Structure probing data (2A3 and DMS) for a 170-nucleotide construct. DMS adducts were read by reverse transcription with MarathonRT. For 2A3 the reverse transcriptase was SuperScript II with manganese. For 2A3, 58,439 sequencing reads were counted. Reactivities are given for positions 27 through 129. Conditions: 150 mM KOAc, 10 mM MgCl2 and 150 mM bicine (pH 8.5), 24 C. Source: RMDB library 15KLIB, as collected in RNAgym.

RNA sequence: GGGAACGACUCGAGUAGAGUCGAAAAAUAGGCUUAUCAAGAGAGGUGGAGGGACUGGACCGAUGAAACCCGGCAGCCAGAAAUGGUGCCUAUUCCUGCAGCGGAAACGUUGAAAGAUGAGCCGAUGAGACAUUCAGGUUCGCCUGAAUGAAAAGAAACAACAACAACAAC
Reactivity to 2A3 in 0.01 (KOAc 150mM, MgCl2 10mM, bicine 150mM(pH8.5), 24C), signal-to-noise 9, nucleotides 027 to 129: a000u120a030g010g000c010u040u040a030u080c070a130a020g100a020g010a040g140g020u100g020g030a040g010g010g010a000c010u010g020g010a000c020c020g050a100u080g040a050a040a040c000c010c000g000g010c010a040g150c000c010a010g030a020a040a020u070g020g000u020g010c000c010u010a070u040u030c000c010u030g020c020a010g010c020g030g000a040a030a020c040g020u030u060g060a110a080a020g010a010u030g010a000g010c010c010g000a040u090g010a010g010a020
Reactivity to DMS in 0.01 (KOAc 150mM, MgCl2 10mM, bicine 150mM(pH8.5), 24C), signal-to-noise 9, nucleotides 027 to 129: a050u030a040g000g040c020u000u000a030u000c040a150a090g000a120g000a080g020g020u030g010g020a060g010g010g010a080c040u020g000g030a020c010c040g000a060u000g000a070a050a100c070c010c020g000g000c060a060g000c000c000a000g000a070a070a090u000g010g020u000g000c030c020u010a090u030u000c000c010u020g030c030a040g030c040g000g000a090a050a090c050g000u010u030g020a090a070a070g010a030u000g020a010g010c000c010g020a060u020g020a100g020a150